[RMDB]
RNA sequence: GGGAACGACUCGAGUAGAGUCGAAAAGGAUUCGUCGGUUCAGCGACGAUAAGCCGAGAAGUGCCAAUAAAACUGUUAAGUGGUUUGGUAACGCUCGGUAAGGUAGCCAAAAGGCUGAAACUCCGUGCACAAAGACCGCACGGACGCUUCACAUAUACUGAGAUAUCUAGUUCGCUAGAUAUCUCAGAAAAGAAACAACAACAACAAC
Reactivity to 2A3 in 0.01 (KOAc 150mM, MgCl2 10mM, bicine 150mM(pH8.5), 24C), signal-to-noise 7, nucleotides 027 to 156: g080g030a110u060u010c000g000u000c010g010g060u110u110c060a040g050c020g000a000c000g000a000u010a020a010g000c000c010g000a000g000a300a040g010u010g000c010c010a010a020u130a070a090a020a010c030u060g120u300u240a210a030g020u040g050g090u040u030u020g020g000u010a040a010c010g010c080u010c010g000g000u000a000a000g040g020u040a010g020c000c010a040a160a050a040g090g010c020u000g020a030a010a010c010u000c000c010g000u010g000c020a030c010a060a290a030g090a140c090c070g000c000a000c000g000g010a010c040g000c020u110u130c050a040c030a070u200a020u060a150
Reactivity to DMS in 0.01 (KOAc 150mM, MgCl2 10mM, bicine 150mM(pH8.5), 24C), signal-to-noise 3, nucleotides 027 to 156: g020g010a150u000u000c000g030u000c010g000g000u000u000c120a070g040c000g010a030c000g000a020u010a060a260g010c000c000g010a020g000a040a030g010u000g000c000c010a010a020u000a070a050a080a060c020u010g060u010u000a090a060g030u000g010g010u010u000u000g010g000u000a050a030c030g000c000u010c010g030g040u010a050a090g020g000u000a030g010c020c020a020a100a100a180g010g000c020u000g000a030a020a040c040u010c010c010g000u000g010c000a300c040a090a120a180g000a130c100c070g010c010a010c020g010g000a010c050g030c020u000u000c000a050c060a130u000a090u000a170
Structure probing data (2A3 and DMS) for a 207-nucleotide construct. DMS adducts were read by reverse transcription with MarathonRT. Source: RMDB library PDB130, as collected in RNAgym. Values cover nucleotides 27 to 156.